[RMDB]
RNA sequence: GGGAACGACUCGAGUAGAGUCGAAAAGUUUUUAACGCGUGUGCACCCGCUAACACGAAUUACCCAGUUAUUUUCGACUUUACUCGAGUCGUUAUAGCGUGAGUUGGCGGAGUACUCCGCGAAAUAAACGUAUGAUUCAGUUCGCUGAAUCAUACGUAAAAGAAACAACAACAACAAC
Reactivity to DMS in 0.01 (KOAc 150mM, MgCl2 10mM, bicine 150mM(pH8.5), 24C), signal-to-noise 1, nucleotides 027 to 126: g030u010u000u000u000u020a040a080c200g020c000g010u010g020u000g010c100a060c040c030c040g010c030u000a100a030c000a020c050g000a060a060u000u010a140c070c110c050a110g000u000u000a050u000u010u000u000c020g000a020c000u000u000u000a000c000u000c010g010a020g000u010c000g010u000u010a010u000a050g000c020g000u010g010a070g020u010u010g020g030c000g000g000a110g010u000a070c050u000c000c010g010c010g010a050a060a060u000a060a070

Chemical mapping of a 177-nucleotide RNA with DMS.
The data come from the RNA Mapping Database (RMDB), library M2PK90.
The DMS profile rests on 1,279 reads.
Conditions: 150 mM KOAc, 10 mM MgCl2 and 150 mM bicine (pH 8.5), 24 C.